[RMDB]
RNA sequence: GGGAACGACUCGAGUAGAGUCGAAAAGAUAUGGACGUCCACGACGUCUAUGAAGAUCAUCGGAAACGAUGAUUGGAGACGGUGGAACGUCCUAAGUCAAAACACGACGCCGUUCGCGGCGUCGUGAGAAAAGAUGUUUCUUCGGAAACAUCUUUUCAAAAGAAACAACAACAACAAC
Reactivity to DMS in 0.01 (KOAc 150mM, MgCl2 10mM, bicine 150mM(pH8.5), 24C), signal-to-noise 2, nucleotides 027 to 126: g010a000u000a020u000g010g000a020c000g030u000c000c010a000c040g010a190c300g000u000c010u000a200u020g000a240a230g000a000u000c020a010u000c000g000g000a010a000a020c000g030a000u010g010a000u000u010g000g010a010g020a000c020g060g040u000g030g000a040a090c010g020u000c010c000u000a000a050g000u000c010a140a100a160a300c020a020c000g010a020c000g000c000c000g050u010u010c280g030c030g040g020c000g000u010c010g000u000g000a050
Reactivity to 2A3 in 0.01 (KOAc 150mM, MgCl2 10mM, bicine 150mM(pH8.5), 24C), signal-to-noise 1, nucleotides 027 to 126: g010a010u030a020u040g000g000a000c000g000u000c010c010a030c020g220a170c300g070u000c020u090a300u040g020a000a000g000a020u000c000a010u000c010g010g000a000a000a010c010g000a010u010g000a020u000u000g000g010a010g000a000c110g060g000u010g000g020a190a200c000g000u010c000c000u010a000a010g000u010c000a090a060a000a150c000a000c000g000a000c020g020c030c010g010u150u160c300g010c030g150g020c100g020u000c010g010u010g000a000